[RMDB]
RNA sequence: GGGAACGACUCGAGUAGAGUCGAAAACAGAAGCUCACAACUGACAUUGCGGCAACAUGGAGCCUGACGUGGGUUUUUACGCUGGCAGAAGAGCGCGCGUUCAUCCAGUGGUUGCGUAGCCCGAGUUACCUCAACAAAGCAAACAACUGGUUCACCAGCUUCAAUACCUCUUCGGAGGUAUUGAAGCAAAAGAAACAACAACAACAAC
Reactivity to 2A3 in 0.01 (KOAc 150mM, MgCl2 10mM, bicine 150mM(pH8.5), 24C), signal-to-noise 2, nucleotides 027 to 156: c040a130g110a170a030g040c010u040c000a080c010a090a080c030u150g080a050c040a050u060u210g010c050g040g040c040a080a030c030a210u130g070g050a070g060c090c010u080g070a110c080g090u160g000g060g010u020u030u010u020u110a050c030g000c030u110g080g000c010a050g010a170a010g000a070g000c000g010c050g010c020g070u010u030c050a090u010c000c010a000g060u020g010g040u040u070g000c010g010u100a050g000c010c030c060g000a010g000u040u120a080c000c010u040c000a010a030c020a050a140a000g060c000a010a010a110c020a010a060c040u000g000g000u060u050c050a050c130c010a050